[RMDB]
RNA sequence: GGGAACGACUCGAGUAGAGUCGAAAAAAAAGAUAUGGAACGCAUAGGAACUUGGAUUUAUGUAGCUAACAUAUCGGAAACGAUAUGGACGCUACAUUGUCAGUUCCGUGCGUUCCUAAGUCAAAAAGUCAGUAAGAUGCUUCGGCAUCUUACUGACAAAAGAAACAACAACAACAAC
Reactivity to DMS in 0.01 (KOAc 150mM, MgCl2 10mM, bicine 150mM(pH8.5), 24C), signal-to-noise 1, nucleotides 027 to 126: a080a030a010a020g070a040u050a300u020g000g000a020a000c010g010c000a040u000a160g060g000a010a000c000u000u010g010g030a080u000u000u000a000u000g040u000a030g000c000u000a050a300c000a000u000a000u000c080g000g000a060a050a190c040g020a010u010a000u040g000g030a270c300g000c000u000a000c010a000u000u000g030u000c000a000g000u000u000c000c000g010u000g000c000g040u000u000c000c000u000a000a020g060u000c000a130a220a120a140a100

This 177-nucleotide RNA was probed chemically with DMS. The data come from the RNA Mapping Database (RMDB), library TTRDES. The RNA was probed in 150 mM KOAc, 10 mM MgCl2 and 150 mM bicine (pH 8.5) at 24 C. Reactivities are rounded to 0.1 and cut off at 0 and 3.